[RMDB]
RNA sequence: GGGAACGACUCGAGUAGAGUCGAAAAUGCUGCUAUGCAGUCUAAACUUACAGAUCUUAAAUGCACAUCUGUGGUUCUCCUCUCUGUGCUCCAACAGUUACACUUAGAGGCUAAUAGUAGGGCCUGGCGACCGAUUUGUUCGCAAAUCGGAAAAGAAACAACAACAACAAC
Reactivity to DMS in 0.01 (KOAc 150mM, MgCl2 10mM, bicine 150mM(pH8.5), 24C), signal-to-noise 9, nucleotides 027 to 129: u020g030c000u010g010c000u070a090u060g040c050a020g000u050c080u010a110a060a070c000u020u040a000c010a030g000a060u030c050u040u040a090a110a070u070g050c230a120c190a060u000c020u010g040u020g030g030u010u010c080u020c000c000u000c040u020c000u010g030u000g030c050u020c050c040a090a090c150a120g030u020u050a090c010a000c060u040u000a030g020a040g000g010c120u000a040a020u020a050g010u010a000g000g010g010c080c060u030g020g030c030g020a100
Reactivity to 2A3 in 0.01 (KOAc 150mM, MgCl2 10mM, bicine 150mM(pH8.5), 24C), signal-to-noise 9, nucleotides 027 to 129: u180g000c010u010g000c040u100a050u290g030c020a020g020u040c050u130a090a080a040c020u080u230a030c040a010g010a020u040c030u100u210a130a200a160u240g070c130a050c000a090u000c010u020g020u010g010g000u050u000c010u010c010c000u010c000u000c010u010g020u030g020c020u030c060c030a060a060c010a110g030u120u100a030c030a010c030u050u070a020g010a010g060g020c020u040a060a040u030a110g080u030a030g010g040g030c000c010u020g050g020c030g040a040